[RMDB]
RNA sequence: GGGAACGACUCGAGUAGAGUCGAAAACGAGUCUAACCUGAUUAUCAGGGAAGGCGUAGGGAAACCGACAUGGCCGCAGCAUUGCGAGGGCCGCCGUGUUCAAGCGCGGGGAGUCAAUCGGACACGAUUCGGCAAUUAUAUUCGUAUAAUUGCCGAAAAAAGAAACAACAACAACAAC
Reactivity to DMS in 0.01 (KOAc 150mM, MgCl2 10mM, bicine 150mM(pH8.5), 24C), signal-to-noise 8, nucleotides 027 to 126: c050g010a130g010u000c010u010a060a300c010c000u010g000a260u030u030a120u020c010a010g000g000g020a200a050g000g010c010g010u030a160g000g000g010a090a080a080c020c000g000a090c130a080u020g000g000c010c020g000c040a230g000c080a130u020u030g000c040g000a150g000g000g010c010c060g020c020c030g000u020g000u000u030c190a070a100g010c050g020c020g000g000g010g020a070g000u000c050a070a220u010c030g000g000a100c090a070c130g000a160
Reactivity to 2A3 in 0.01 (KOAc 150mM, MgCl2 10mM, bicine 150mM(pH8.5), 24C), signal-to-noise 6, nucleotides 027 to 126: c010g030a000g020u000c000u020a090a110c000c000u000g040a130u060u300a170u300c010a000g000g000g020a020a080g020g000c040g000u050a020g030g010g010a110a020a010c020c000g010a020c040a100u130g030g000c000c020g030c000a020g020c110a160u090u300g030c030g060a100g010g040g000c000c000g000c010c010g030u020g020u070u130c100a100a050g030c030g010c030g040g020g030g030a040g020u020c020a020a080u070c030g020g000a010c030a010c110g040a030
Chemical mapping of a 177-nucleotide RNA with DMS and 2A3. It was measured as part of the RMDB libraries RFM100 and RFMREP. Values cover nucleotides 27 to 126. Values are in units of 0.01, from 0 to 300, in steps of 10.